Notes:
An RNA of 177 nucleotides, treated with DMS and 2A3 and read out base by base. 2A3 adducts were read by reverse transcription with SuperScript II with manganese. For 2A3, 1,019 sequencing reads were counted.

[RMDB]
RNA sequence: GGGAACGACUCGAGUAGAGUCGAAAAUACUGUGGAUAAUCUUGUACAUAUGUUUUUUCAUAUCAUUGGAGGUGUACCUUCAGAGUAGAUUCUUAGAAGUAGGAUUGCUGGGUUAAAAGAUGUACACAGAUGAUAGGUCUUUCGAGACCUAUCAUCUAAAAGAAACAACAACAACAAC
Reactivity to DMS in 0.01 (KOAc 150mM, MgCl2 10mM, bicine 150mM(pH8.5), 24C), signal-to-noise 2, nucleotides 027 to 126: u000a080c060u000g020u020g010g000a090u000a090a080u000c060u000u000g000u010a080c070a030u010a030u000g000u010u000u010u010u010u010c020a070u000a050u020c140a110u000u010g010g020a050g010g010u010g020u010a080c030c010u010u000c030a070g010a060g030u000a060g010a060u010u000c030u010u010a110g000a060a110g020u010a030g000g000a050u000u000g010c000u000g020g010g000u000u000a050a080a030a080g020a060u000g010u010a070c080a070c130
Reactivity to 2A3 in 0.01 (KOAc 150mM, MgCl2 10mM, bicine 150mM(pH8.5), 24C), signal-to-noise 2, nucleotides 027 to 126: u110a010c050u050g010u030g090g030a040u070a210a100u160c010u060u170g030u060a030c010a030u060a080u110g140u050u000u000u030u080u160c030a030u050a040u130c100a090u040u120g010g000a000g030g030u130g030u170a150c000c000u030u000c040a040g020a000g100u030a020g000a060u080u010c000u060u010a050g020a170a090g090u080a010g000g040a010u030u000g000c010u030g020g040g020u030u010a030a070a000a030g000a030u050g000u070a040c060a010c000

Description: The DMS profile rests on 2,402 reads.